[RMDB]
RNA sequence: GGGAACGACUCGAGUAGAGUCGAAAACCCCACCUCAGUGUUCUACGCCAGGACGCGGGCUGGGGAGGAUGAGGGCGCAUAGCCGGGGGGGUCACUGCUGUUGUCCCCCACCCAGAUCUCCUGAGGGUAGAACUUAUGCGUUCGCGCAUAAGUUCUAAAAAGAAACAACAACAACAAC
Reactivity to DMS in 0.01 (KOAc 150mM, MgCl2 10mM, bicine 150mM(pH8.5), 24C), signal-to-noise 1, nucleotides 027 to 126: c080c000c010c120a100c100c040u000c050a030g030u000g000u000u000c030u010a130c150g030c190c060a060g020g040a040c120g030c090g020g020g020c060u010g000g000g010g000a090g010g010a170u010g010a140g030g010g040c040g030c140a130u000a100g000c040c010g000g020g020g000g010g000g010u000c040a050c080u010g000c140u020g000u010u010g030u000c010c000c000c000c000a040c000c000c020a070g000a090u000c100u000c080c000u000g000a070g010g010g030

An RNA of 177 nucleotides, treated with DMS and read out base by base. For DMS, 1,110 sequencing reads were counted. The reactions ran in a buffer of 150 mM KOAc, 10 mM MgCl2 and 150 mM bicine (pH 8.5), at 24 C. For DMS the reverse transcriptase was MarathonRT. It was measured as part of the RMDB library OK2TRN. Values cover nucleotides 27 to 126.